Background
Chemical mapping of a 177-nucleotide RNA with 2A3 and DMS. 2A3 adducts were read by reverse transcription with SuperScript II with manganese. The data come from the RNA Mapping Database (RMDB), library OK1LIB. DMS adducts were read by reverse transcription with MarathonRT.
RNA sequence: GGGAACGACUCGAGUAGAGUCGAAAAUGGCUCGAAUUUUCAAGCGCAGAGUACGCGUAGCACGAUUUCUGAAACAAGCGUAGUUUUUCCAAAGGAAGGGAGUGUUUUCUGGAAACACUGGAUAAGCCAAUUCGGUUGGGUUCGCCCAACCGAAUUGAAAAGAAACAACAACAACAAC
Reactivity to 2A3 in 0.01 (KOAc 150mM, MgCl2 10mM, bicine 150mM(pH8.5), 24C), signal-to-noise 2, nucleotides 027 to 126: u150g010g000c030u050c060g080a130a100u060u030u080u070c040a070a010g000c000g000c010a000g040a010g140u150a050c000g000c000g010u030a000g020c010a000c090g030a040u020u100u000c040u050g080a010a190a000c020a080a000g040c010g040u040a010g030u040u030u000u080u000c030c000a110a060a000g010g060a010a110g020g020g040a020g030u000g040u030u020u040u010c100u100g070g000a010a020a010c010a010c000u000g030g030a150u090a140a000g040c010
Reactivity to DMS in 0.01 (KOAc 150mM, MgCl2 10mM, bicine 150mM(pH8.5), 24C), signal-to-noise 2, nucleotides 027 to 126: u010g000g000c010u000c060g000a100a050u010u030u040u020c090a030a050g000c000g080c080a060g000a120g020u030a040c110g020c010g000u010a050g000c080a130c090g010a210u000u010u020c080u000g010a080a030a010c220a050a130g000c090g010u010a040g010u030u000u000u000u000c000c000a060a100a120g010g010a050a070g010g000g010a060g020u000g000u010u000u020u040c150u000g000g000a090a000a020c010a030c000u000g000g020a090u060a120a110g000c120